[RMDB]
RNA sequence: GGGAACGACUCGAGUAGAGUCGAAAAAUCAUCUGAAGAUCAGCUAUUAGAAGAGAAAGAUCAGUUAAGUCCUUUGGUCCUGAUCAGCUUGAUACAAGAACUACUGAUUUCAACUUCUUUGGCUUAAAAAAGGCCACAGAGUUCGCUCUGUGGCCAACAAGUAGCAUCACUUCGGUGAUGCUACUUGAAAAGAAACAACAACAACAAC
Reactivity to DMS in 0.01 (KOAc 150mM, MgCl2 10mM, bicine 150mM(pH8.5), 24C), signal-to-noise 1, nucleotides 027 to 156: a160u000c020a070u000c010u020g030a140a110g040a060u000c150a040g020c020u000a090u020u020a060g010a060a020g000a070g000a160a080a090g000a000u000c020a050g030u000u000a030a100g010u020c030c030u000u010u000g050g010u000c030c030u000g000a230u020c110a100g020c030u000u000g030a060u000a110c070a020a040g000a000a000c030u000a090c000u000g000a060u000u000u000c000a110a270c000u000u000c000u020u000u000g020g020c020u020u000a020a070a040a120a080a110g040g030c000c000a030c030a040g000a030g030u000u000c300g020c020u000c000u000g060u000g000g020c020c010a000a000
Reactivity to 2A3 in 0.01 (KOAc 150mM, MgCl2 10mM, bicine 150mM(pH8.5), 24C), signal-to-noise 3, nucleotides 027 to 156: a000u060c030a000u040c040u140g080a140a050g060a190u080c050a010g010c010u060a100u190u030a170g000a010a000g020a000g030a060a060a020g030a030u010c000a000g010u050u080a080a010g040u030c020c000u010u140u180g030g010u030c020c030u140g070a250u150c060a040g160c050u090u050g010a000u060a110c030a030a000g020a030a000c010u090a010c000u030g000a000u010u030u010c060a090a080c000u000u000c000u030u040u040g000g000c000u010u020a020a000a000a000a020a050g000g000c000c000a000c000a010g010a000g020u110u100c120g090c100u000c010u000g000u000g000g000c010c010a000a000